[RMDB]
RNA sequence: GGGAACGACUCGAGUAGAGUCGAAAAGUGGAUUUGUUCGCAAAUCCACAAAACCCAACAAGCCUGGCUGGCAGCCUAACAACCGAGCUACGCGGCGUAGCAAAAGGUUACACUUCGGUGUAACCAACAAAAAAGGACUGUUCGCAGUCCUUUUUUGAAAAGAAACAACAACAACAAC
Reactivity to 2A3 in 0.01 (KOAc 150mM, MgCl2 10mM, bicine 150mM(pH8.5), 24C), signal-to-noise 1, nucleotides 027 to 126: g000u000g000g010a010u010u010u020g030u020u040c080g020c130a000a000a000u000c000c000a000c000a020a010a000a000c000c000c000a000a030c020a030a010g050c010c050u090g030g010c000u020g030g000c070a000g000c010c030u040a040a040c040a010a020c020c020g030a030g000c010u030a010c040g060c080g240g030c090g030u020a000g000c000a050a000a100a000g010g000u000u010a000c020a000c000u060u090c270g080g020u000g000u000a000a000c000c000a000a000
Reactivity to DMS in 0.01 (KOAc 150mM, MgCl2 10mM, bicine 150mM(pH8.5), 24C), signal-to-noise 3, nucleotides 027 to 126: g010u000g010g010a000u000u000u000g000u000u020c230g010c000a010a000a000u000c000c000a010c000a020a070a130a200c020c000c000a120a130c170a130a110g020c040c030u010g010g010c030u010g000g000c060a060g000c040c020u000a070a050c200a060a040c040c020g000a130g010c010u000a000c050g010c080g010g000c040g020u000a020g000c020a110a050a070a080g000g000u000u000a010c010a000c020u000u010c130g020g010u010g000u000a000a000c000c000a070a070

The record gives the reactivity of an RNA of 177 nucleotides to 2A3 and DMS. DMS adducts were read by reverse transcription with MarathonRT.